[RMDB]
Source information: This 177-nucleotide RNA was probed chemically with DMS. It was measured as part of the RMDB library OK2TST. Values are in units of 0.01, from 0 to 300, in steps of 10. The reactions ran in a buffer of 150 mM KOAc, 10 mM MgCl2 and 150 mM bicine (pH 8.5), at 24 C.
RNA sequence: GGGAACGACUCGAGUAGAGUCGAAAACUGGCUAUUCUUAGAAAUUUGGUUUAGAACGUACCUUGUGUUUGUGUGAAGCUGGAUGGGAUGUCUCCAAAACUGACAGGAAAAAGUGUCAGGUUGCAGAGCUGCAUAGCUAGUUCGCUAGCUAUGCAGCAAAAGAAACAACAACAACAAC
Reactivity to DMS in 0.01 (KOAc 150mM, MgCl2 10mM, bicine 150mM(pH8.5), 24C), signal-to-noise 1, nucleotides 027 to 126: c020u010g010g020c060u000a050u010u000c030u000u020a030g010a060a110a130u010u000u000g010g010u010u010u010a060g020a080a070c090g030u010a060c060c040u000u000g010u010g000u010u010u000g010u000g020u000g030a080a110g020c040u000g020g000a040u000g000g010g000a090u000g010u000c030u000c030c010a060a080a030a060c020u000g000a100c070a070g000g010a010a110a070a140a100g060u000g000u000c010a010g000g000u020u010g020c170a090g010a160